The record gives the reactivity of an RNA of 177 nucleotides to 2A3 and DMS. Conditions: 150 mM KOAc, 10 mM MgCl2 and 150 mM bicine (pH 8.5), 24 C. Reactivities are given for positions 27 through 126.
RNA sequence: GGGAACGACUCGAGUAGAGUCGAAAAGUGUGAACCAGUGCUCACUUGUGAGCCCGGAUAAACGGCAGAAAGCGAACGCUAUUGAGUGCUGAUGACCACGCGAAAGCCGAUAAUCGGGCUGCGAGUAGUUCCUUUUAGGGUUCGCCCUAAAAGGAACAAAAGAAACAACAACAACAAC
Reactivity to 2A3 in 0.01 (KOAc 150mM, MgCl2 10mM, bicine 150mM(pH8.5), 24C), signal-to-noise 3, nucleotides 027 to 126: g100u080g020u040g050a080a080c030c000a030g030u050g070c020u020c070a050c010u060u020g010u040g190a010g000c000c000c000g030g000a020u080a050a190a000c000g000g000c030a030g210a140a140a000g030c050g070a070a040c070g010c070u100a120u210u270g080a100g050u120g020c030u040g010a050u140g060a080c030c040a020c000g020c010g080a100a050a020g010c020c020g000a070u080a110a050u050c000g010g020g000c000u010g000c000g010a000g010u020a010
Reactivity to DMS in 0.01 (KOAc 150mM, MgCl2 10mM, bicine 150mM(pH8.5), 24C), signal-to-noise 3, nucleotides 027 to 126: g020u010g010u010g020a080a130c050c030a160g010u000g000c030u000c070a070c030u000u000g030u000g010a060g030c000c020c000g010g000a060u000a050a110a190c050g000g020c030a050g010a090a100a230g000c020g000a100a100c190g010c040u010a250u000u010g000a050g040u000g010c070u020g010a110u010g010a110c110c040a180c080g010c030g020a060a120a140g000c000c020g030a110u000a080a090u010c010g000g000g000c000u000g000c030g000a000g010u000a120